[RMDB]
RNA sequence: GGGAACGACUCGAGUAGAGUCGAAAAAUUAUUGUUGCUCAUUGGUAAUUUAAGUAAAUAAAGUUAGGCAACACACUGAUCAAGCUAAAAAAACCACUUGUCACCCUUCUAACUAAUGAAUUGCAUGAACAUUGGAUAAAUUCGUUUAUCCAAUGUUAAAAGAAACAACAACAACAAC
Reactivity to 2A3 in 0.01 (KOAc 150mM, MgCl2 10mM, bicine 150mM(pH8.5), 24C), signal-to-noise 3, nucleotides 027 to 126: a010u090u050a050u060u060g010u020u020g000c020u020c100a080u060u120g060g010u070a070a070u080u110u080a140a080g040u080a060a120a190u150a120a170a020g020u040u100a020g000g010c000a000a010c030a010c010a010c040u040g020a070u100c020a050a040g040c080u170a070a040a000a030a050a060a060c040c020a040c020u020u020g010u030c020a060c000c020c000u010u040c020u050a040a070c010u020a060a080u070g090a070a070u130u080g040c020a030u110g080
Reactivity to DMS in 0.01 (KOAc 150mM, MgCl2 10mM, bicine 150mM(pH8.5), 24C), signal-to-noise 6, nucleotides 027 to 126: a080u020u000a080u010u000g010u000u000g020c030u000c080a130u010u000g010g010u000a060a050u010u000u000a070a140g010u010a060a060a090u000a080a070a100g000u000u000a060g010g000c070a030a030c050a050c130a050c130u000g000a030u010c050a050a080g010c080u020a010a010a060a090a060a070a080c110c090a050c040u000u000g010u000c040a050c030c020c020u000u000c050u010a070a040c070u000a050a070u000g010a050a060u000u010g020c060a080u000g000
An RNA of 177 nucleotides, treated with 2A3 and DMS and read out base by base. The reactions ran in a buffer of 150 mM KOAc, 10 mM MgCl2 and 150 mM bicine (pH 8.5), at 24 C.